The record gives the reactivity of an RNA of 177 nucleotides to DMS and 2A3.

[RMDB]
RNA sequence: GGGAACGACUCGAGUAGAGUCGAAAAACUUGGAGGCAGUCCACGCAGCUGAAGCGAAGGCUAAACUACCGACCAACCUUUGCCGUGAUAUCGUUCUUUCUCUCCCCGUCCCCAUCCGUGAGCGGCGGAUAGAGUUGUCUUUCGAGACAACUCUAUCAAAAGAAACAACAACAACAAC
Reactivity to DMS in 0.01 (KOAc 150mM, MgCl2 10mM, bicine 150mM(pH8.5), 24C), signal-to-noise 4, nucleotides 027 to 126: a060c100u000u000g010g010a210g000g010c040a070g010u010c040c040a100c100g010c090a050g000c070u010g010a110a120g000c060g000a070a090g010g000c080u010a060a090a070c090u000a080c070c030g000a120c080c040a080a090c040c020u000u000u010g010c020c030g000u000g010a070u000a070u000c070g000u000u000c030u000u000u010c060u000c040u000c020c000c020c020g000u000c010c010c000c030a090u010c050c030g010u000g000a120g020c050g000g010c230g010
Reactivity to 2A3 in 0.01 (KOAc 150mM, MgCl2 10mM, bicine 150mM(pH8.5), 24C), signal-to-noise 2, nucleotides 027 to 126: a000c060u070u100g070g010a010g030g030c020a010g020u080c020c000a020c060g060c030a050g000c050u120g060a110a010g010c020g070a080a030g030g030c030u050a060a070a100c040u090a150c020c000g050a040c050c010a010a070c020c010u030u060u040g010c030c010g050u050g030a080u040a030u170c040g050u120u020c010u030u080u010c030u020c010u000c020c010c020c020g020u000c030c010c000c010a000u060c020c020g040u040g020a030g030c030g030g000c020g010
About this RNA
The 2A3 profile rests on 2,840 reads. The RNA was probed in 150 mM KOAc, 10 mM MgCl2 and 150 mM bicine (pH 8.5) at 24 C. DMS adducts were read by reverse transcription with MarathonRT.